[RMDB]
RNA sequence: GGGAACGACUCGAGUAGAGUCGAAAAAAAAAGGAAGUAUCGCCUAAUGGUAGGGCAGCAGCUUGGAAAGCUGUGGGCGGCAACGUCUUGUGGGUUCGAUUCCCUCAACUUCCGCCAAAUAAAAAAAUGUCAUAACGUGAUUCGUCACGUUAUGACAAAAAGAAACAACAACAACAAC
Reactivity to DMS in 0.01 (KOAc 150mM, MgCl2 10mM, bicine 150mM(pH8.5), 24C), signal-to-noise 1, nucleotides 027 to 126: a000a020a040a150a100g000g000a030a040g000u000a080u000c050g010c030c000u020a110a020u000g060g060u030a060g030g000g010c000a240g000c030a000g000c000u030u000g020g000a080a110a070g030c020u010g020u000g030g000g020c000g000g000c240a010a060c070g030u000c000u010u000g010u020g000g000g020u000u050c040g000a300u000u000c020c000c000u000c020a030a050c000u000u010c000c000g000c080c050a020a060a090u040a000a000a080a090a040a000a110
The data come from the RNA Mapping Database (RMDB), library M2PK90. An RNA of 177 nucleotides, treated with DMS and read out base by base. Values cover nucleotides 27 to 126. For DMS, 769 sequencing reads were counted.